[RMDB]
RNA sequence: GGGAACGACUCGAGUAGAGUCGAAAAGAGUGAGAACGUUCUCGUGAGAUCUCGAGUGUACGUGAGUUCGAGUGAACGUUCUCGUACGUUCACGAUCGAGUUCGUUCGAACGAACUCACACUCGAACGAACACACACGAUCGUACUCGAACACGAUCCCACCAAACAGAUUUCGAUCUGUUUGGUGGAAAAGAAACAACAACAACAAC
Reactivity to DMS in 0.01 (KOAc 150mM, MgCl2 10mM, bicine 150mM(pH8.5), 24C), signal-to-noise 1, nucleotides 027 to 156: g030a090g030u000g000a120g010a060a080c040g000u000u000c030u010c120g030u000g020a100g000a180u010c060u000c000g010a080g040u000g090u020a110c110g010u000g010a110g040u000u000c000g010a200g000u020g010a060a040c030g010u000u010c060u000c020g010u010a030c040g000u010u000c080a120c000g000a150u000c000g050a110g000u000u010c010g010u000u000c030g020a070a210c020g000a100a100c020u000c040a100c000a070c000u000c010g010a030a040c030g000a030a040c010a300c050a090c080a160c010g000a110u000c000g000u000a040c030u000c050g010a030a080c000a130c080g000a100u000c030
Reactivity to 2A3 in 0.01 (KOAc 150mM, MgCl2 10mM, bicine 150mM(pH8.5), 24C), signal-to-noise 6, nucleotides 027 to 156: g110a020g090u180g020a030g010a060a020c010g010u090u030c050u020c050g010u040g030a090g010a130u030c000u000c030g020a050g010u110g020u130a180c180g080u060g040a030g000u020u030c020g010a050g020u130g010a000a000c000g010u010u010c010u000c000g000u020a000c020g050u040u180c110a060c110g040a080u040c010g010a020g030u010u010c010g000u010u000c010g000a080a020c030g000a010a000c020u010c020a010c000a000c010u000c000g000a030a020c050g010a040a010c050a000c010a000c010a030c100g010a020u080c010g010u030a050c030u030c070g030a090a020c060a010c060g020a030u060c010